Chemical mapping of a 177-nucleotide RNA with 2A3 and DMS.
For DMS, 639 sequencing reads were counted.
Source: RMDB library OK2TST, as collected in RNAgym.
For DMS the reverse transcriptase was MarathonRT.
For 2A3 the reverse transcriptase was SuperScript II with manganese.
Conditions: 150 mM KOAc, 10 mM MgCl2 and 150 mM bicine (pH 8.5), 24 C.

[RMDB]
RNA sequence: GGGAACGACUCGAGUAGAGUCGAAAAGAAUGUCAUUGAGUGCAAAAUACUCGAAAUGUUCAAGAAUUCAGCUGAGGAUCCGUUAAAGUGGCAUCUUCACUAUUUCGCACCAUGUUACUUUAACAAGGACUGAUUAUGGCUUCGGCCAUAAUCAGUCAAAAGAAACAACAACAACAAC
Reactivity to 2A3 in 0.01 (KOAc 150mM, MgCl2 10mM, bicine 150mM(pH8.5), 24C), signal-to-noise 1, nucleotides 027 to 126: g030a010a040u060g000u040c120a100u040u100g020a010g020u010g050c050a040a120a000a100u070a090c010u000c020g050a000a000a110u050g020u110u040c060a040a040g040a070a040u050u060c060a000g060c130u020g050a010g000g000a060u050c000c010g040u080u190a200a110a040g090u070g060g000c010a030u050c000u120u010c010a040c050u040a060u000u160u080c090g010c070a060c000c000a000u050g060u030u060a050c030u000u160u020a100a040c030a060a120g190
Reactivity to DMS in 0.01 (KOAc 150mM, MgCl2 10mM, bicine 150mM(pH8.5), 24C), signal-to-noise 1, nucleotides 027 to 126: g020a060a040u000g010u000c130a120u000u020g020a020g000u000g020c070a140a030a170a170u010a100c030u020c020g030a030a250a090u000g020u000u000c010a040a120g000a060a050u000u000c130a120g040c280u000g010a060g040g020a020u000c020c020g030u000u000a050a100a180g000u020g000g000c080a010u000c010u000u000c080a040c060u000a100u000u000u000c030g000c260a080c060c030a050u000g000u000u000a080c000u000u000u000a010a060c140a080a060g000